[RMDB]
RNA sequence: GGGAACGACUCGAGUAGAGUCGAAAACAGCGCGAUCAUCUAUGGCCUGCGCAGGCCUCUGGCCAUGAUCCACUGGAUCGCGCGUACUAUGCGCAGGCCUAGCGCGUGAUCCAUAGGCGCGAUGCGCAAAACGAGAUGCGUUCGCGCAUCUCGUUUUAAAAGAAACAACAACAACAAC
Reactivity to 2A3 in 0.01 (KOAc 150mM, MgCl2 10mM, bicine 150mM(pH8.5), 24C), signal-to-noise 1, nucleotides 027 to 126: c000a020g000c000g000c000g020a060u160c030a040u040c110u160a150u250g000g010c010c000u030g000c000g000c060a030g000g060c020c140u200c170u260g020g000c000c020a050u140g010a090u060c060c040a130c170u210g000g010a020u000c000g000c000g020c000g040u010a020c000u020a090u110g050c010g000c020a000g000g000c000c000u010a020g000c000g000c000g040u020g020a030u010c000c000a050u050a070g060g000c020g000c060g140a120u240g050c030g000c030
Reactivity to DMS in 0.01 (KOAc 150mM, MgCl2 10mM, bicine 150mM(pH8.5), 24C), signal-to-noise 2, nucleotides 027 to 126: c060a160g020c000g040c050g000a030u000c100a140u020c120u000a050u010g000g000c050c010u000g030c020g010c020a080g010g000c020c020u010c130u010g010g040c010c070a120u000g020a050u000c030c100a120c220u010g010g020a020u000c000g010c100g010c030g020u010a020c110u000a110u000g020c010g000c070a030g000g000c000c020u010a020g020c060g010c020g000u010g000a010u000c020c080a080u020a050g000g020c000g010c050g020a080u000g000c050g030c040